[RMDB]
RNA sequence: GGGAACGACUCGAGUAGAGUCGAAAACAAAACAAACACAGCGACCCGGGGAGACCUGCUGCGUGCAGGAAACCAACAACCCGAGUUGGUUUGCGACCAUAAUGAUCGCUAAAGAAGGUCGCUGCAAGCUAGCGUGCAGGUUCGCCUGCACGCUAGCAAAAGAAACAACAACAACAAC
Reactivity to 2A3 in 0.01 (KOAc 150mM, MgCl2 10mM, bicine 150mM(pH8.5), 24C), signal-to-noise 1, nucleotides 027 to 126: c030a000a130a000a050c030a000a130a030c050a000c000a110g000c000g000a000c000c000c000g000g060g080g090a070g030a060c020c000u080g120c040u120g090c080g100u250g000c000a010g000g000a000a000a000c000c000a000a000c000a000a030c000c020c030g000a080g000u000u000g030g040u000u000u010g000c000g000a000c000c060a170u210a190a060u200g060a070u090c000g000c000u070a000a070a000g150a170a000g000g000u000c000g000c000u000g000c000a020a020